Structure probing data (DMS) for a 177-nucleotide construct. It was measured as part of the RMDB library OK2TRN. Conditions: 150 mM KOAc, 10 mM MgCl2 and 150 mM bicine (pH 8.5), 24 C. DMS adducts were read by reverse transcription with MarathonRT.
[RMDB]
RNA sequence: GGGAACGACUCGAGUAGAGUCGAAAAUAUCGUGAGUUUUACACGGUUGUACUUUCACAUUUUUGCUCAAAUUAAACUUCGUUGGUUAUGGGUAUUUAGUUUGGCUACUCUAUCUAACACUUUGCUGUGUCCAAGGCUAAUUCGUUAGCCUUGGACAAAAAGAAACAACAACAACAAC
Reactivity to DMS in 0.01 (KOAc 150mM, MgCl2 10mM, bicine 150mM(pH8.5), 24C), signal-to-noise 1, nucleotides 027 to 126: u010a080u010c030g060u000g010a200g000u000u030u000u000a090c030a050c050g000g000u020u000g010u000a070c150u000u000u000c030a070c130a110u000u010u000u000u000g000c060u000c040a020a070a060u020u030a030a050a050c080u010u000c110g010u000u000g000g040u010u010a060u000g010g000g010u000a060u000u000u020a090g010u020u000u010g010g010c040u000a030c060u000c060u000a040u000c020u010a080a090c080a090c090u010u000u000g010c120u000g030